[RMDB]
Source information:
Chemical mapping of a 177-nucleotide RNA with DMS and 2A3. Values cover nucleotides 27 to 126. DMS adducts were read by reverse transcription with MarathonRT. The data come from the RNA Mapping Database (RMDB), library OK2TST.

RNA sequence: GGGAACGACUCGAGUAGAGUCGAAAACUGCAGAAGCAUGGAACGUUUACCUGGCCGCUCUGGAGGCACAACCUCUUCUUACCAAGUGCGCCACGAGUGCGGUGCUCCUUCCUGCAGGGGACCUCGCCAGUAAGCAACGAUUCGUCGUUGCUUACUGAAAAGAAACAACAACAACAAC
Reactivity to DMS in 0.01 (KOAc 150mM, MgCl2 10mM, bicine 150mM(pH8.5), 24C), signal-to-noise 6, nucleotides 027 to 126: c010u000g020c020a020g010a110a090g020c170a030u010g000g020a060a070c080g010u000u000u010a080c090c040u010g020g010c030c030g010c010u000c040u010g010g010a080g030g000c060a050c190a090a180c120c050u010c060u000u000c120u000u010a150c180c160a070a120g010u000g010c080g010c000c000a050c150g010a070g020u000g020c040g000g020u000g010c050u000c040c010u000u000c040c000u000g020c000a020g010g000g000g010a100c060c020u010c100g030c160
Reactivity to 2A3 in 0.01 (KOAc 150mM, MgCl2 10mM, bicine 150mM(pH8.5), 24C), signal-to-noise 5, nucleotides 027 to 126: c000u010g000c000a000g020a140a020g050c110a070u110g010g030a070a050c060g040u120u180u100a050c070c010u030g080g010c040c010g010c020u000c030u040g040g000a010g080g010c050a030c020a140a110c020c020u070c000u150u070c040u130u130a120c040c050a120a040g010u010g010c050g020c020c010a040c110g050a050g030u040g000c020g010g020u040g030c020u040c000c010u020u050c010c010u000g000c010a010g000g000g020g010a020c000c010u030c030g040c030